This 177-nucleotide RNA was probed chemically with DMS and 2A3. For DMS, 2,137 sequencing reads were counted. 2A3 is a SHAPE reagent: it acylates the 2'-hydroxyl of flexible nucleotides of all four kinds. For DMS the reverse transcriptase was MarathonRT.
[RMDB]
RNA sequence: GGGAACGACUCGAGUAGAGUCGAAAAGGACCACACAGACACACACAGAGUAGACAUUGUGUAGACCCAGGGAGUAGACAGUUAUCUGUAAGCCAAGUAGAGAGGCCUACACAGAUUCUCUGGAAAAUCACGUAUUACGUUUCGACGUAAUACGUGAAAAAGAAACAACAACAACAAC
Reactivity to DMS in 0.01 (KOAc 150mM, MgCl2 10mM, bicine 150mM(pH8.5), 24C), signal-to-noise 3, nucleotides 027 to 126: g010g010a170c030c020a120c150a060c090a060g010a070c100a060c150a070c140a130c020a030g020a130g010u010a030g000a140c120a080u000u020g020u000g010u000a030g030a030c040c010c020a170g000g000g010a100g040u010a090g000a040c040a040g010u000u010a090u010c020u010g020u000a070a160g010c010c000a080a140g030u010a120g000a200g010a140g020g030c000c000u000a020c070a040c030a020g000a100u000u000c030u000c000u010g000g000a050a060a050a120
Reactivity to 2A3 in 0.01 (KOAc 150mM, MgCl2 10mM, bicine 150mM(pH8.5), 24C), signal-to-noise 3, nucleotides 027 to 126: g040g010a060c020c010a030c010a000c020a030g120a070c010a010c010a000c000a000c000a090g000a000g080u060a020g040a080c040a220u090u090g000u000g010u030a010g040a030c010c010c010a020g060g010g010a090g080u120a040g060a080c050a000g030u120u160a160u220c000u020g000u030a020a020g000c010c020a100a010g040u230a030g070a020g020a040g150g000c010c000u010a000c000a010c010a000g010a050u090u000c010u000c010u000g000g110a030a050a010a040
Reactivities are given for positions 27 through 126. 2A3 adducts were read by reverse transcription with SuperScript II with manganese.